An RNA of 207 nucleotides, treated with DMS and 2A3 and read out base by base. For 2A3 the reverse transcriptase was SuperScript II with manganese. For 2A3, 2,402 sequencing reads were counted. It was measured as part of the RMDB library M2RFPK.
RNA sequence: GGGAACGACUCGAGUAGAGUCGAAAAGAAUCACCGUACCUAUUUAGGUUUACGCUCCAAGAUCGGUGCAUAGCAGCCCUAUCAAUAUCUAGGAGAACUGUGCUAUGUUUAGAAGAUUAGGUAGUCUAUUACACAGCCAUGUUCGCAUGGCUGUGAAGUGACUUACAAUCUUCGGAUUGUAAGUCACAAAAGAAACAACAACAACAAC
Reactivity to DMS in 0.01 (KOAc 150mM, MgCl2 10mM, bicine 150mM(pH8.5), 24C), signal-to-noise 2, nucleotides 027 to 156: g010a140a070u000c010a110c030c050g000u010a050c010c010u010a220u000u010u010a030g020g000u000u000u000a030c000g020c040u000c010c020a130a110g010a060u000c030g010g000u000g060c020a030u000a040g020c040a100g010c070c000c000u010a210u000c110a080a090u010a100u000c140u010a040g030g000a100g010a080a130c020u000g010u000g000c050u000a000u000g010u000u000u000a110g010a100a110g010a110u000u000a070g010g010u000a080g020u010c020u000a090u010u000a300c020a010c000a020g000c000c020a030u000g010u010u010c240g000c020a000u000g000g010c000u010g010u000g000a020a100
Reactivity to 2A3 in 0.01 (KOAc 150mM, MgCl2 10mM, bicine 150mM(pH8.5), 24C), signal-to-noise 4, nucleotides 027 to 156: g130a040a040u110c030a030c070c010g030u040a020c020c000u080a150u200u220u300a020g010g000u030u050u100a060c050g000c030u070c030c010a160a030g040a040u040c010g020g020u080g000c010a020u030a020g030c010a010g010c020c010c010u030a060u090c090a160a140u090a040u270c040u020a010g010g010a120g040a150a080c090u130g020u020g100c010u020a020u030g030u030u100u040a160g020a200a020g000a080u070u050a040g070g010u010a030g040u000c020u090a130u060u130a050c020a000c000a000g000c000c000a010u000g020u030u040c110g030c090a000u000g050g000c000u000g000u000g000a010a000